[RMDB]
RNA sequence: GGGAACGACUCGAGUAGAGUCGAAAAGUUUCACAGAGAGUAGUGGGGACCAUUUCUUUGGAAUAAAGUUGAAACAUGUUUCUUAAUAGACAACUCUCUCAGCAUUAUAAAAUCCUGAUACAGAACUCAAGGAAAGACACACACGCACACACACACAAGUAUACGCCUAUUUCGAUAGGCGUAUACUAAAAGAAACAACAACAACAAC
Reactivity to DMS in 0.01 (KOAc 150mM, MgCl2 10mM, bicine 150mM(pH8.5), 24C), signal-to-noise 1, nucleotides 027 to 156: g010u000u010u000c050a120c030a170g030a140g000a070g010u000a050g040u000g010g020g010g020a190c030c040a030u030u010u010c030u000u000u000g000g020a120a110u040a100a020a100g020u010u010g020a220a060a100c130a170u000g010u010u000u000c010u010u000a020a110u000a100g010a090c020a070a060c110u010c020u000c010u000c010a100g050c050a070u000u010a150u000a070a050a050a080u000c020c030u020g030a140u000a300c080a110g000a030a090c040u000c050a040a140g000g010a060a030a090g000a070c030a020c070a030c040a000c030g030c010a010c030a100c000a070c050a010c010a040c070a020
Reactivity to 2A3 in 0.01 (KOAc 150mM, MgCl2 10mM, bicine 150mM(pH8.5), 24C), signal-to-noise 1, nucleotides 027 to 156: g000u000u090u140c040a050c010a000g060a000g000a000g050u140a010g030u060g040g000g000g030a000c010c010a010u090u050u000c070u050u030u130g100g070a080a050u080a090a190a030g020u030u050g040a090a080a000c070a070u050g000u000u070u000c020u050u210a230a180u040a080g060a050c000a030a030c040u000c000u000c000u000c040a020g020c030a030u070u170a070u220a150a150a030a020u010c010c010u000g030a010u050a130c090a070g160a150a060c020u020c170a060a000g000g030a070a010a060g080a000c030a000c020a020c000a000c060g020c000a010c000a000c020a000c000a000c000a000c020a050
Structure probing data (DMS and 2A3) for a 207-nucleotide construct. Values cover nucleotides 27 to 156. It was measured as part of the RMDB library OK3TST. Conditions: 150 mM KOAc, 10 mM MgCl2 and 150 mM bicine (pH 8.5), 24 C. High 2A3 reactivity points to a flexible backbone, as in loops and unpaired stretches. Reactivities are rounded to 0.1 and cut off at 0 and 3. DMS adducts were read by reverse transcription with MarathonRT.